[RMDB]
RNA sequence: GGGAACGACUCGAGUAGAGUCGAAAAGAUAUGGACCUUCCAGGGAGCCUGUUGUCGGAAACGACAAUAAGGCGACGAUCUGGAGGUCCUAAGUCAAAAUGCCAGUGGGAGUUCGCUCCCACUGGCAGGUGCUGUACAAGUUCGCUUGUACAGCACCAAAAGAAACAACAACAACAAC
Reactivity to 2A3 in 0.01 (KOAc 150mM, MgCl2 10mM, bicine 150mM(pH8.5), 24C), signal-to-noise 1, nucleotides 027 to 126: g000a000u000a020u040g000g000a000c000c010u250u120c110c070a000g040g040g000a000g000c050c000u000g020u000u000g010u000c010g030g050a000a010a020c000g000a010c000a010a000u280a300a020g000g010c000g020a030c000g010a000u010c010u000g010g010a000g020g000u000c010c000u000a010a000g000u000c000a040a030a010a090u120g020c000c000a010g000u020g000g030g020a040g050u180u250c300g230c210u000c060c010c000a030c010u000g020g040c000a000